Structure probing data (2A3) for a 207-nucleotide construct. The data come from the RNA Mapping Database (RMDB), library OK3TST. The 2A3 profile rests on 963 reads. The RNA was probed in 150 mM KOAc, 10 mM MgCl2 and 150 mM bicine (pH 8.5) at 24 C. As a SHAPE reagent, 2A3 marks flexible, mostly unpaired nucleotides at the ribose 2'-OH.

[RMDB]
RNA sequence: GGGAACGACUCGAGUAGAGUCGAAAACUUUGUUGAAACCGUCUGUUCCAACAAAGACACGAUUGACAUGAAAAAGGGAUAUCAUUUCUUUCAAUAAAGGACCAACAGUCACCUCUGAAUUGGGCUGGUAAUAACCGCCCAGUAAAAUGAUUUGACACGUACUCGUCAUGUUCGCAUGACGAGUACGAAAAGAAACAACAACAACAAC
Reactivity to 2A3 in 0.01 (KOAc 150mM, MgCl2 10mM, bicine 150mM(pH8.5), 24C), signal-to-noise 2, nucleotides 027 to 156: c000u060u000u010g000u020u000g030a040a020a010c040c030g180u100c140u200g020u040u040c030c010a000a020c000a000a100a000g030a010c080a010c190g040a030u000u100g030a020c070a050u050g040a020a060a060a060a060g090g010g000a010u060a090u080c030a040u000u120u020c040u040u080u030c060a100a170u080a210a090a070g060g050a050c050c010a020a040c080a080g010u040c010a000c000c020u020c030u040g040a070a070u010u000g010g000g000c110u130g050g020u040a200a120u130a300a000c000c000g000c000c000c020a000g000u010a000a020a010a030u130g010a030u030u000u050g000a000c000a000